[RMDB]
Chemical mapping of a 177-nucleotide RNA with 2A3 and DMS. The reactions ran in a buffer of 150 mM KOAc, 10 mM MgCl2 and 150 mM bicine (pH 8.5), at 24 C. It was measured as part of the RMDB library OK2TST. 2A3 adducts were read by reverse transcription with SuperScript II with manganese.

RNA sequence: GGGAACGACUCGAGUAGAGUCGAAAAAGAUCACUAGGCACGCUUGGAGGGAUAAGAGUCAUGACUGACUCUGCGGUGGGUUGUGCGACUCAAGCGUUGGUAGGAUCAGCAGUAACCCAUGGGCUACCCCUGGUGUAAGAUUCGUCUUACACCAGGGAAAAGAAACAACAACAACAAC
Reactivity to 2A3 in 0.01 (KOAc 150mM, MgCl2 10mM, bicine 150mM(pH8.5), 24C), signal-to-noise 2, nucleotides 027 to 126: a020g050a050u020c020a040c200u060a070g150g020c020a000c020g000c020u020u060g080g060a020g030g030g040a060u110a170a040g000a000g020u000c020a040u150g180a110c110u040g000a010c000u040c010u050g020c030g000g180u140g010g080g050u190u090g030u050g050c090g040a040c020u010c030a010a030g000c000g020u070u110g000g040u040a020g020g000a010u020c020a010g000c020a000g000u070a090a070c000c030c010a020u130g050g010g020c000u130a050c020
Reactivity to DMS in 0.01 (KOAc 150mM, MgCl2 10mM, bicine 150mM(pH8.5), 24C), signal-to-noise 4, nucleotides 027 to 126: a080g010a030u010c010a120c030u000a050g010g030c040a040c020g030c020u000u000g020g000a080g000g000g000a150u010a110a050g020a030g010u010c000a050u010g010a220c260u010g010a020c000u000c010u000g030c170g020g000u000g020g010g000u000u000g010u000g010c080g000a120c080u010c030a020a020g010c020g020u000u000g020g010u000a050g000g000a030u010c010a080g020c110a080g010u010a060a100c020c010c000a110u010g010g000g000c060u010a130c100